RNA sequence: GGGAACGACUCGAGUAGAGUCGAAAAACAAUGUUCGCUCGUGUGUUUUCUCCUUUGCAAUGCGAAACUCCUCCUCAUUUCGCGUGGGGUGGAGGCACAUGGCGUUAAGAAGCUCCAACCCAUCACGCAGGUACCCGUGAUUCGUCACGGGUACCUGAAAAGAAACAACAACAACAAC
Reactivity to 2A3 in 0.01 (KOAc 150mM, MgCl2 10mM, bicine 150mM(pH8.5), 24C), signal-to-noise 4, nucleotides 027 to 126: a020c110a080a240u150g050u070u050c000g020c080u140c140g060u030g000u000g030u020u020u010u030c020u030c040c040u110u120u140g120c070a120a130u100g010c010g000a050a030a040c030u050c010c010u010c000c000u050c040a040u010u080u070c080g000c020g010u030g020g020g020g000u030g000g000a020g000g000c010a000c000a010u030g020g000c050g020u040u080a100a040g040a040a030g020c040u000c090c000a110a080c010c000c000a070u110c030a010c110g030

The record gives the reactivity of an RNA of 177 nucleotides to 2A3. 2A3 adducts were read by reverse transcription with SuperScript II with manganese. The RNA was probed in 150 mM KOAc, 10 mM MgCl2 and 150 mM bicine (pH 8.5) at 24 C. The 2A3 profile rests on 1,774 reads.